[RMDB]
RNA sequence: GGGAACGACUCGAGUAGAGUCGAAAACUUGUCGAGGAUCUUGUUGUACAUCGUGAUCGUGUCGCCCGCGCGCACCGGCUUGAUCCAGCGGAUCUCCUCGAUGCCGGGCGAACCCAUGCUCGUCGAAAGCCUGAUUUAAUUUCGAUUAAAUCAGGCUAAAAGAAACAACAACAACAAC
Reactivity to DMS in 0.01 (KOAc 150mM, MgCl2 10mM, bicine 150mM(pH8.5), 24C), signal-to-noise 3, nucleotides 027 to 126: c070u010u010g010u000c020g000a050g010g000a050u000c030u000u000g010u010u010g000u000a180c160a060u000c050g030u010g010a090u000c060g020u010g000u000c020g030c020c020c060g020c250g020c110g010c030a030c050c020g010g010c060u010u000g010a040u000c030c010a130g020c150g040g010a030u000c060u000c040c020u000c020g000a040u000g010c060c020g000g000g020c010g010a020a070c030c030c030a100u010g010c030u010c020g000u010c040g010a080a140
Reactivity to 2A3 in 0.01 (KOAc 150mM, MgCl2 10mM, bicine 150mM(pH8.5), 24C), signal-to-noise 2, nucleotides 027 to 126: c020u040u160g070u030c010g040a020g020g000a000u040c030u060u230g030u040u110g060u130a060c020a120u040c050g020u070g050a050u020c010g040u040g020u060c050g000c000c040c000g080c040g030c040g010c060a040c040c040g040g000c040u000u040g010a020u000c010c020a030g060c080g050g000a000u010c030u040c040c020u010c040g040a050u080g000c020c000g040g010g030c000g020a050a030c000c010c010a000u060g000c000u010c030g080u060c020g110a050a080

This 177-nucleotide RNA was probed chemically with DMS and 2A3.
Values are in units of 0.01, from 0 to 300, in steps of 10.
For 2A3 the reverse transcriptase was SuperScript II with manganese.